[RMDB]
RNA sequence: GGGAACGACUCGAGUAGAGUCGAAAAUGUCACACAGUAGCGAGGGAUGCAAUUAAUUGCAUCUACACCAAGCUCAAGCCUUGGAUUUCGACUAGUGUCGAGUCGUUCCCACUCGCUACGCCCACAAAGUCUGGAUGAGAUUCGUCUCAUCCAGACUAAAAGAAACAACAACAACAAC
Reactivity to DMS in 0.01 (KOAc 150mM, MgCl2 10mM, bicine 150mM(pH8.5), 24C), signal-to-noise 1, nucleotides 027 to 126: u020g000u010c170a090c250a150c080a100g020u000a010g000c000g020a010g020g000g000a000u000g000c000a030a040u000u010a050a080u010u000g010c000a000u000c000u000a040c150a170c000c010a000a000g040c010u010c260a130a090g000c220c000u010u000g000g000a300u000u000u000c010g000a020c000u000a070g020u000g010u000c000g010a000g010u010c000g060u010u010c000c000c000a020c000u000c000g010c010u000a000c030g010c060c010c020a110c070a110a070